Chemical mapping of a 177-nucleotide RNA with DMS and 2A3. The 2A3 profile rests on 3,311 reads. DMS adducts were read by reverse transcription with MarathonRT. Conditions: 150 mM KOAc, 10 mM MgCl2 and 150 mM bicine (pH 8.5), 24 C.
[RMDB]
RNA sequence: GGGAACGACUCGAGUAGAGUCGAAAAGGCGGAAUCCCGAAAUCCCUCCUAAACGCGCGCAAAUAAAGGGAGGGAGGGAUGAUCCCGAAAGCGCGCGACGGGGUGAAGGCUCAACGGCCGAACGCCACCCAUACGCUGCAUUCGUGCAGCGUAUGGGAAAAGAAACAACAACAACAAC
Reactivity to DMS in 0.01 (KOAc 150mM, MgCl2 10mM, bicine 150mM(pH8.5), 24C), signal-to-noise 1, nucleotides 027 to 126: g000g040c010g000g000a170a000u000c000c100c000g000a000a080a000u000c000c000c000u010c000c000u000a040a110a020c030g000c000g020c000g010c000a080a150a160u030a050a200a180g010g050g040a080g020g010g000a000g040g000g000a170u020g050a070u010c000c000c000g000a050a010a070g000c000g000c010g030c000g000a300c070g000g040g000g030u000g010a020a060g000g020c000u020c050a070a110c210g040g020c000c000g000a100a040c020g040c000c000a240
Reactivity to 2A3 in 0.01 (KOAc 150mM, MgCl2 10mM, bicine 150mM(pH8.5), 24C), signal-to-noise 2, nucleotides 027 to 126: g010g000c000g040g020a040a060u020c000c000c000g010a010a030a000u030c000c000c000u010c010c040u110a100a190a070c010g010c000g010c000g010c010a080a130a110u290a200a170a090g020g000g000a020g020g000g010a030g000g000g000a050u100g030a070u030c000c000c000g060a030a030a000g010c000g000c000g000c000g030a020c020g000g020g000g010u030g040a030a010g030g000c030u060c120a130a030c080g020g000c000c000g000a060a000c010g000c000c000a020
Reactivities are given for positions 27 through 126. The data come from the RNA Mapping Database (RMDB), library OK1LIB.